Conditions: 150 mM KOAc, 10 mM MgCl2 and 150 mM bicine (pH 8.5), 24 C. An RNA of 177 nucleotides, treated with 2A3 and DMS and read out base by base. For DMS, 2,589 sequencing reads were counted. The 2A3 profile rests on 5,209 reads. It was measured as part of the RMDB library TTRDEL.
RNA sequence: GGGAACGACUCGAGUAGAGUCGAAAAGAUAUGGAGACAUGCUCCGUUGUGUGCGAUUCUAUUCGGAAACGAAUAGGGCACACACCGGAGCAACAGCUCCUAAGUCAAAGUGUAGUUCGCUACACAACGAAACUUGUAUGUUCGCAUACAAGUUUCGAAAAGAAACAACAACAACAAC
Reactivity to 2A3 in 0.01 (KOAc 150mM, MgCl2 10mM, bicine 150mM(pH8.5), 24C), signal-to-noise 2, nucleotides 027 to 126: g050a020u090a020u210g000g020a010g000a030c060a130u050g000c010u000c010c000g000u000u010g000u020g000u000g000c030g170a270u270u110c020u010a000u020u010c000g050g000a080a090a070c010g000a000a000u010a010g030g030g000c000a010c000a010c000a000c020c000g000g000a010g000c000a000a000c000a000g000c010u000c020c020u020a170a030g060u020c040a020a080a150g000u010g000u000a030g010u020u110c300g000c130u020a010c020a000c020a010a040
Reactivity to DMS in 0.01 (KOAc 150mM, MgCl2 10mM, bicine 150mM(pH8.5), 24C), signal-to-noise 3, nucleotides 027 to 126: g010a030u000a300u010g000g010a000g010a030c030a220u010g010c000u010c000c010g020u010u010g000u000g010u000g010c000g000a120u020u020c000u000a010u010u000c010g010g000a100a120a150c020g000a010a020u000a020g000g040g000c000a010c010a010c010a010c050c000g000g010a020g000c000a000a010c180a170g000c010u010c000c000u010a030a130g000u010c030a090a070a120g010u000g010u000a020g000u000u020c260g010c000u000a000c000a020c000a120a140